[RMDB]
RNA sequence: GGGAACGACUCGAGUAGAGUCGAAAAAAAGCAGUGAUCCAACCAGUGUUUGAUGCUAUCUUAUUAGAACAAGCAGCAUGUAGACAAGGCACUCACUCUACUUUAACUAAGGGUGAAGUUAGUGGUGCAGCAAGGCAAGAUUCGUCUUGCCUUGCUGAAAAGAAACAACAACAACAAC
Reactivity to 2A3 in 0.01 (KOAc 150mM, MgCl2 10mM, bicine 150mM(pH8.5), 24C), signal-to-noise 1, nucleotides 027 to 126: a000a010a000g070c090a050g020u010g020a060u070c000c000a030a090c010c020a080g010u020g080u030u100u100g100a050u030g030c010u020a050u150c040u100u120a060u020u130a100g030a180a010c080a040a020g020c010a000g000c010a060u160g020u050a000g000a070c000a020a060g020g000c010a010c010u070c000a010c010u020c030u020a100c000u020u070u080a210a110c050u070a090a110g150g030g040u010g050a020a000g000u000u020a020g020u020g100g000u050g000
Reactivity to DMS in 0.01 (KOAc 150mM, MgCl2 10mM, bicine 150mM(pH8.5), 24C), signal-to-noise 1, nucleotides 027 to 126: a020a050a010g030c090a020g000u000g000a070u000c040c060a080a180c100c020a100g010u000g000u000u060u010g020a020u000g010c040u000a090u020c060u000u000a120u000u000a090g000a100a060c130a000a030g000c240a040g000c010a000u000g020u000a070g000a070c050a070a070g040g000c010a000c040u020c010a010c000u020c070u000a020c040u000u000u020a060a070c060u010a060a130g000g020g000u020g000a000a040g000u000u000a000g020u000g000g010u000g000